[RMDB]
RNA sequence: GGGAACGACUCGAGUAGAGUCGAAAAGAAGUGGCAGGGACAUGCCCCAGAAGCUCGUUCUAGCAACAUAUGUUUGGCUAGUUCGAGCGAUUAGUCUUGAGGAGCGUCCUCUCGCCUCUUCACGAGACGAUACUGGUGGGUUCGCCCACCAGUAUCGAAAAGAAACAACAACAACAAC
Reactivity to DMS in 0.01 (KOAc 150mM, MgCl2 10mM, bicine 150mM(pH8.5), 24C), signal-to-noise 2, nucleotides 027 to 126: g000a000a000g020u000g000g020c030a010g000g000g000a000c010a030u000g020c040c000c010c070a040g000a170a170g000c000u000c000g000u000u000c020u020a030g000c000a060a060c040a300u040a090u000g000u070u000u020g010g010c000u000a010g000u040u000c000g020a000g000c000g040a010u040u060a110g000u000c040u080u040g000a100g010g050a260g010c080g000u020c000c000u030c040u020c150g020c030c010u000c010u000u050c010a150c120g000a160g000a150
Reactivity to 2A3 in 0.01 (KOAc 150mM, MgCl2 10mM, bicine 150mM(pH8.5), 24C), signal-to-noise 6, nucleotides 027 to 126: g010a010a000g000u000g010g000c010a010g010g000g020a010c010a030u280g040c010c000c000c010a010g000a040a010g000c000u000c000g000u000u000c000u000a000g000c020a030a070c020a070u300a110u300g150u150u120u060g130g050c000u000a010g010u000u000c000g000a010g000c000g000a000u000u060a030g060u030c030u060u140g020a220g010g020a150g020c010g000u010c000c010u050c010u050c070g000c000c000u030c000u000u010c000a040c060g070a060g020a030
Description
Structure probing data (DMS and 2A3) for a 177-nucleotide construct. The RNA was probed in 150 mM KOAc, 10 mM MgCl2 and 150 mM bicine (pH 8.5) at 24 C. For DMS the reverse transcriptase was MarathonRT. 2A3 adducts were read by reverse transcription with SuperScript II with manganese.